[RMDB]
The record gives the reactivity of an RNA of 177 nucleotides to DMS and 2A3.
DMS adducts were read by reverse transcription with MarathonRT.
Source: RMDB library TTRDES, as collected in RNAgym.
Values cover nucleotides 27 to 126.
For DMS, 20,467 sequencing reads were counted.
For 2A3, 33,144 sequencing reads were counted.
RNA sequence: GGGAACGACUCGAGUAGAGUCGAAAAGAUAUGGAAGCAAGAGAUUGAUAAGCGCGAUCGGAAACGAUCGAACUACGCUUGUUUGAUCUCUUGCUUCCUAAGUCAAAGCAGUACUUCGGUACUGCAACCUUAAUACUAGGUUCGCCUAGUAUUAAGGAAAAGAAACAACAACAACAAC
Reactivity to DMS in 0.01 (KOAc 150mM, MgCl2 10mM, bicine 150mM(pH8.5), 24C), signal-to-noise 9, nucleotides 027 to 126: g000a040u010a300u000g010g000a020a000g010c000a010a010g010a020g010a020u000u000g010a010u000a010a010g000c000g010c020g010a010u000c000g010g000a140a130a230c010g020a010u000c000g000a060a080c160u010a300c030g010c000u000u000g010u000u000u010g020a000u000c000u000c000u000u000g000c000u000u000c000c000u000a010a050g000u000c040a090a150a150g010c010a010g000u000a000c000u000u010c220g030g010u000a010c000u010g010c000a030a030
Reactivity to 2A3 in 0.01 (KOAc 150mM, MgCl2 10mM, bicine 150mM(pH8.5), 24C), signal-to-noise 5, nucleotides 027 to 126: g010a020u070a030u140g010g000a000a000g000c000a010a000g020a000g000a030u020u130g020a030u060a100a010g010c020g020c000g020a000u000c010g000g030a060a070a050c010g000a000u010c010g000a040a020c060u160a040c050g000c010u020u020g050u060u090u130g010a010u000c000u010c000u000u000g000c000u000u010c000c000u000a000a000g000u000c010a010a040a050g000c000a000g010u030a000c010u060u180c300g140g000u000a000c000u010g000c000a000a000